An RNA of 177 nucleotides, treated with 2A3 and read out base by base. The reactions ran in a buffer of 150 mM KOAc, 10 mM MgCl2 and 150 mM bicine (pH 8.5), at 24 C. Reactivities are given for positions 27 through 126. Source: RMDB library OK1LIB, as collected in RNAgym.
RNA sequence: GGGAACGACUCGAGUAGAGUCGAAAAUACGCUGGUAGCAGCAAGUAGCAGCUCAAUCCGCAGAUGAGCGGAAUAUACAUAUGAAAAUGGAUCUCGAUAGAGCUGCUACAAUCGAGACCAUUAGAGACGUCACUCCUCAGUUCGCUGAGGAGUGACGAAAAGAAACAACAACAACAAC
Reactivity to 2A3 in 0.01 (KOAc 150mM, MgCl2 10mM, bicine 150mM(pH8.5), 24C), signal-to-noise 1, nucleotides 027 to 126: u200a050c000g000c000u010g030g130u300a150g150c000a000g100c050a000a000g000u000a000g000c000a000g000c000u000c000a110a110u000c000c000g000c070a030g000a300u250g110a190g000c000g000g000a000a000u100a000u000a000c220a000u270a260u240g300a160a000a000a000u040g090g120a150u000c000u000c030g030a030u000a010g000a000g000c000u000g000c000u000a000c000a000a000u000c000g000a000g000a000c000c000a000u000u080a050g000a000g080a140